[RMDB]
RNA sequence: GGGAACGACUCGAGUAGAGUCGAAAAAAUUGAGAUUCAAGCACUUUUCUAUGUGGCUUUAAGGUGUGUUUGAAUGGAACACCUUAAAUCCAUGAAGAAAAGUGUUUGAAUCUCAAUUAGAUAACCAAUCACAAAUAUGCUUCGGCAUAUUUGUGAUAAAAGAAACAACAACAACAAC
Reactivity to DMS in 0.01 (KOAc 150mM, MgCl2 10mM, bicine 150mM(pH8.5), 24C), signal-to-noise 2, nucleotides 027 to 126: a010a010u000u000g000a040g010a020u000u000c000a000a000g010c010a010c000u010u000u000u000c000u020a040u010g010u010g020g000c080u000u000u010a000a020g010g010u000g020u010g000u020u060u000g000a180a090u070g050g010a110a030c000a000c010c010u020u000a020a010a000u000c000c010a010u000g000a070a010g000a010a020a000a000g000u000g000u010u000u000g000a000a000u000c000u000c000a000a000u000u000a050g010a180u040a070a180c000c030a070
The record gives the reactivity of an RNA of 177 nucleotides to DMS. The data come from the RNA Mapping Database (RMDB), library RFM100. Values cover nucleotides 27 to 126.